[RMDB]
RNA sequence: GGGAACGACUCGAGUAGAGUCGAAAACGUUCCUCCAGUGAAGUCUGUGAAUUGGAGGGGCGACUACUUACAGGCUGGCCAAAAGAGCGGGCGACCGGCUCCGAGGCGAGAUCUACAGGCCGCUGGGUGGACGGUAUCCUGGCAGUAGGAGACUGGAGUAUUAGUCGUAGUUCGCUACGACUAAUACAAAAGAAACAACAACAACAAC
Reactivity to 2A3 in 0.01 (KOAc 150mM, MgCl2 10mM, bicine 150mM(pH8.5), 24C), signal-to-noise 2, nucleotides 027 to 156: c010g000u010u000c000c000u010c000c000a020g020u020g030a120a020g030u040c010u040g040u060g040a050a020u030u010g000g000a000g000g000g000g010c000g060a010c040u130a050c030u110u160a040c010a010g020g000c000u030g040g010c000c010a030a070a060a010g020a010g000c020g000g000g020c030g050a050c020c000g060g040c000u000c010c010g010a010g020g000c010g010a000g010a020u040c040u050a020c020a030g000g000c000c010g020c030u010g000g020g020u070g020g020a020c030g020g000u040a040u070c000c000u030g050g030c050a070g040u140a040g030g050a020g020a030c010u020g020g010a030
Reactivity to DMS in 0.01 (KOAc 150mM, MgCl2 10mM, bicine 150mM(pH8.5), 24C), signal-to-noise 1, nucleotides 027 to 156: c020g000u000u000c020c000u030c030c000a020g030u010g000a100a100g010u010c030u000g000u010g000a150a020u010u000g010g010a060g010g010g010g000c010g000a150c080u010a030c090u020u010a060c040a050g030g040c020u010g000g030c000c030a090a100a070a050g020a070g040c020g010g020g050c100g010a080c010c000g030g020c030u010c020c010g000a300g020g000c000g020a170g020a050u000c080u000a300c010a050g010g020c000c020g000c030u000g000g010g010u010g010g020a040c040g010g000u000a120u000c000c020u000g000g040c060a100g000u010a050g000g000a060g000a170c030u010g010g030a300